[RMDB]
RNA sequence: GGGAACGACUCGAGUAGAGUCGAAAAGCUCUUGUAUAUGAGAGCAAGGUGUCAGACACAAACAGGCUUCAUGGACACUUGGCCCUGCGUGUGUUAGGGUAUGAGUAUCUUUCUGCAUGGAUGAAAGGGCAGGAUGAUUUUAAAGGUCCUUUAAAAAAGUCAUACGGUCAUUCGUGACCGUAUGACUAAAAGAAACAACAACAACAAC
Reactivity to 2A3 in 0.01 (KOAc 150mM, MgCl2 10mM, bicine 150mM(pH8.5), 24C), signal-to-noise 1, nucleotides 027 to 156: g010c000u050c020u080u020g110u110a300u030a040u300g030a010g000a000g030c020a010a040g040g010u030g050u070c060a040g030a150c020a010c020a150a200a050c060a110g000g060c050u050u060c040a020u110g030g020a020c020a000c020u010u050g070g000c010c030c000u010g010c050g050u160g010u070g050u090u100a040g090g000g000u010a270u090g060a020g010u030a030u000c010u010u050u000c060u020g020c000a080u050g080g130a030u050g160a100a070a050g030g010g020c050a020g000g020a020u070g000a020u020u050u110u160a060a050a080g040g000u040c000c000u000u130u190a060a090a010a060a020